Source information
An RNA of 207 nucleotides, treated with 2A3 and read out base by base. It was measured as part of the RMDB library PDB130. The 2A3 profile rests on 1,040 reads. 2A3 adducts were read by reverse transcription with SuperScript II with manganese.
[RMDB]
RNA sequence: GGGAACGACUCGAGUAGAGUCGAAAAGCUAGCGGGCCACCGAGUCAACAGUGAAAUACUACCCGUCGGUGACUGCGACUCUCACUCCGGGAGGAGGACACCGAUAGCCGGGCAGUUUGACUGGGGCGGUACGCGCUCGAAAAGAUAUCGAGCGCGCGCUUCCAGUAUACUUCGGUAUACUGGAAGCAAAAGAAACAACAACAACAAC
Reactivity to 2A3 in 0.01 (KOAc 150mM, MgCl2 10mM, bicine 150mM(pH8.5), 24C), signal-to-noise 2, nucleotides 027 to 156: g070c050u070a020g080c050g110g090g000c050c040a130c030c040g020a000g020u040c000a000a070c050a080g010u070g170a180a120a110u170a090c010u050a020c000c010c000g030u030c010g010g000u010g030a080c020u090g050c050g110a070c000u000c000u010c030a150c140u150c140c120g050g010g000a010g010g010a000g030g020a010c000a000c010c000g040a050u070a060g150c090c010g000g000g000c030a040g000u030u050u050g000a020c000u020g010g000g040g000c060g020g000u050a000c000g000c000g000c000u000c000g020a060a050a040a040g130a040u170a010u120c000g000a000g010c010g000c000g010c020